[RMDB]
Structure probing data (DMS and 2A3) for a 207-nucleotide construct. Values cover nucleotides 27 to 156. For 2A3 the reverse transcriptase was SuperScript II with manganese. As a SHAPE reagent, 2A3 marks flexible, mostly unpaired nucleotides at the ribose 2'-OH.
RNA sequence: GGGAACGACUCGAGUAGAGUCGAAAACAAGUAAAUACGAAUUUGUAGUGAGUAAUGAUGUAUCUAAUGUUAAGGUAUAUAGAGAUGGUAUACUACUAACUAACAGGUAUGUGCAAAAAGCAAUUGAUAUACAGGAAAUAGUAGAGGAAACAUUGAACCUUGGUCUGAAAUUCGUUUCAGACCAAGGAAAAGAAACAACAACAACAAC
Reactivity to DMS in 0.01 (KOAc 150mM, MgCl2 10mM, bicine 150mM(pH8.5), 24C), signal-to-noise 3, nucleotides 027 to 156: c040a040a210g030u000a050a070a080u010a120c090g000a100a080u010u000u010g040u000a090g040u030g020a110g020u000a090a100u010g010a120u000g020u000a020u000c020u020a090a130u010g020u000u010a060a080g000g030u000a040u000a040u000a080g010a210g010a080u010g000g050u000a050u000a030c000u000a100c060u000a050a110c050u010a050a140c110a070g040g030u000a050u010g020u010g020c080a040a070a080a110a090g020c030a050a070u000u010g020a060u010a100u000a050c020a080g020g000a030a060a080u000a080g020u000a030g040a110g000g030a100a090a080c080a130u020u020g000a100a120
Reactivity to 2A3 in 0.01 (KOAc 150mM, MgCl2 10mM, bicine 150mM(pH8.5), 24C), signal-to-noise 4, nucleotides 027 to 156: c030a010a040g110u120a020a070a060u120a080c050g050a070a100u070u030u110g060u050a070g020u020g050a050g030u070a050a110u080g080a020u050g010u030a050u030c030u050a080a050u090g040u040u010a060a050g030g000u000a030u000a000u040a060g060a010g010a110u080g050g010u030a010u010a040c030u010a020c010u030a070a030c010u020a050a010c010a070g060g010u070a030u060g040u050g050c020a010a070a060a100a010g010c030a040a010u040u020g030a010u050a000u020a130c020a000g060g060a060a070a060u110a060g020u030a020g010a020g040g050a050a040a020c050a060u100u130g030a020a020
For DMS the reverse transcriptase was MarathonRT. The 2A3 profile rests on 2,380 reads. Source: RMDB library OK3TST, as collected in RNAgym.